[RMDB]
Structure probing data (DMS and 2A3) for a 177-nucleotide construct. The data come from the RNA Mapping Database (RMDB), library OK2TST. Conditions: 150 mM KOAc, 10 mM MgCl2 and 150 mM bicine (pH 8.5), 24 C. For DMS, 58,071 sequencing reads were counted.

RNA sequence: GGGAACGACUCGAGUAGAGUCGAAAAUGCAUCCCAAAGAUGCAGGACGAGAAGAAUGAAAGGCAGAAGAGCGACAAUGGCCGUCAUUUCCAUCGUCCAUGACGAUGGCGCACCUUUAUAGGCAGGACUCAUAUUAUCAUUUCGAUGAUAAUAUGAGAAAAGAAACAACAACAACAAC
Reactivity to DMS in 0.01 (KOAc 150mM, MgCl2 10mM, bicine 150mM(pH8.5), 24C), signal-to-noise 9, nucleotides 027 to 126: u000g010c070a080u000c010c020c200a090a110a210g000a030u000g010c020a070g000g010a080c050g000a080g010a130a170g000a050a040u000g000a040a050a070g010g010c040a060g010a100a120g000a090g010c080g010a060c110a060a100u010g010g010c020c010g010u000c040a040u000u000u000c010c020a140u000c010g010u000c000c130a110u010g010a040c030g010a040u000g010g010c180g000c060a050c030c020u000u000u000a100u000a080g010g010c050a060g010g010a240
Reactivity to 2A3 in 0.01 (KOAc 150mM, MgCl2 10mM, bicine 150mM(pH8.5), 24C), signal-to-noise 9, nucleotides 027 to 126: u050g000c010a030u010c020c010c000a030a060a000g050a020u050g000c020a020g040g020a010c020g020a020g020a130a040g020a020a010u080g020a100a050a080g030g000c050a030g030a280a020g040a070g080c040g040a040c050a090a130u090g060g000c010c010g020u020c010a030u040u070u010c020c010a020u010c010g010u000c010c010a010u150g010a000c030g040a040u060g030g020c050g000c020a070c010c010u060u170u110a170u130a080g070g000c040a010g030g040a040